Chemical mapping of a 177-nucleotide RNA with 2A3 and DMS. It was measured as part of the RMDB library OK2TST. Conditions: 150 mM KOAc, 10 mM MgCl2 and 150 mM bicine (pH 8.5), 24 C. Reactivities are rounded to 0.1 and cut off at 0 and 3.

RNA sequence: GGGAACGACUCGAGUAGAGUCGAAAAAUCGUAUUCUGCAUAAGUAUGGUUAUAUUAGGCAUUUAUGUCGCAAUAACUAAAGAUUUCACACUAAUUUCUUAUAUAAAUCAAACGACCAUUGCAGAUAUCAGACGAUGUAAUUCGUUACAUCGUCUGAAAAAGAAACAACAACAACAAC
Reactivity to 2A3 in 0.01 (KOAc 150mM, MgCl2 10mM, bicine 150mM(pH8.5), 24C), signal-to-noise 1, nucleotides 027 to 126: a000u110c080g000u050a090u120u070c000u030g000c010a030u010a080a030g030u050a090u030g000g000u020u000a000u000a000u000u150a010g040g010c000a030u000u000u160a080u080g000u030c060g000c040a060a120u030a180a090c090u160a130a070a000g080a010u030u060u060c040a010c000a010c020u000a000a090u070u070u000c000u100u040a030u000a040u010a220a140a160u070c000a000a090a270c030g080a020c050c040a100u000u110g000c000a030g000a000u040a020
Reactivity to DMS in 0.01 (KOAc 150mM, MgCl2 10mM, bicine 150mM(pH8.5), 24C), signal-to-noise 1, nucleotides 027 to 126: a040u030c080g010u000a100u000u010c000u000g010c000a010u000a060a120g010u000a050u000g000g020u000u030a030u010a030u000u000a000g000g020c200a010u000u000u000a040u010g030u000c190g020c090a050a000u000a030a060c120u020a130a110a140g020a030u020u000u000c070a020c020a010c030u010a030a010u000u000u000c000u010u000a030u000a060u010a030a020a000u010c000a000a080a030c060g000a160c150c090a080u000u000g030c000a020g010a030u000a110